[RMDB]
RNA sequence: GGGAACGACUCGAGUAGAGUCGAAAAAAAAAAGAUAUGGACAGCUUGGAGAUAUAGACCCGAGCUCCCGUGUCGGAAACGACACGGCCCUCGCUAUAUCUAUGAAGAGCUGUCCUAAGUCAAAAAACAUUCAAGUAACGUUCGCGUUACUUGAAUGAAAAGAAACAACAACAACAAC
Reactivity to DMS in 0.01 (KOAc 150mM, MgCl2 10mM, bicine 150mM(pH8.5), 24C), signal-to-noise 1, nucleotides 027 to 126: a020a000a050a070a190a080g000a000u000a300u010g000g000a000c000a030g000c000u000u000g010g000a030g010a000u000a030u010a030g020a150c210c300c050g010a040g030c050u000c080c000c000g040u010g000u000c010g000g000a150a080a150c000g000a030c000a000c000g010g000c300c190c040u000c040g000c000u000a000u000a000u000c000u000a130u010g030a100a270g000a000g000c010u000g000u030c000c000u000a000a060g000u020c010a000a060a060a150a100a120
Chemical mapping of a 177-nucleotide RNA with DMS. The RNA was probed in 150 mM KOAc, 10 mM MgCl2 and 150 mM bicine (pH 8.5) at 24 C. It was measured as part of the RMDB library TTRDES. The DMS profile rests on 748 reads. DMS adducts were read by reverse transcription with MarathonRT.